[RMDB]
RNA sequence: GGGAACGACUCGAGUAGAGUCGAAAAUCCGCAGCAUUCGUGCUGCGGAACUUACCGAGGUUGUUGCUCGGUAUAACAACAAAACCCUUGGAAUCAAGGGAAACAAUGAGCUAUUCGUAGCUCAUAACGUAUCUUUUAGGUUCGCCUAAAAGAUACGAAAAGAAACAACAACAACAAC
Reactivity to DMS in 0.01 (KOAc 150mM, MgCl2 10mM, bicine 150mM(pH8.5), 24C), signal-to-noise 5, nucleotides 027 to 126: u000c000c000g010c010a000g010c000a020u000u020c220g030u000g030c000u000g010c010g010g010a000a010c070u000u000a030c000c000g020a020g000g000u010u000g000u000u000g010c000u000c010g000g000u000a010u000a050a070c140a090a090c170a070a090a080a150c000c000c000u000u010g010g020a210a140u010c010a010a010g000g000g000a030a030a040c110a050a020u000g000a010g010c000u000a030u000u010c190g020u000a000g000c000u000c000a010u010a030a110
Reactivity to 2A3 in 0.01 (KOAc 150mM, MgCl2 10mM, bicine 150mM(pH8.5), 24C), signal-to-noise 4, nucleotides 027 to 126: u000c000c010g000c000a000g000c000a010u030u090c200g120u030g020c000u000g000c000g000g000a000a000c000u030u030a020c010c000g000a010g020g040u100u080g020u090u130g100c020u000c000g000g030u010a020u060a020a000c030a010a010c010a010a120a060a080c020c000c020u010u010g090g110a230a130u300c010a000a020g000g000g000a050a010a000c050a020a030u010g000a000g000c010u010a020u050u110c190g100u040a010g000c000u020c000a000u010a000a000
The data come from the RNA Mapping Database (RMDB), library M2PK50. Chemical mapping of a 177-nucleotide RNA with DMS and 2A3. High 2A3 reactivity points to a flexible backbone, as in loops and unpaired stretches. The RNA was probed in 150 mM KOAc, 10 mM MgCl2 and 150 mM bicine (pH 8.5) at 24 C. For 2A3 the reverse transcriptase was SuperScript II with manganese. For DMS, 7,909 sequencing reads were counted. The 2A3 profile rests on 6,758 reads.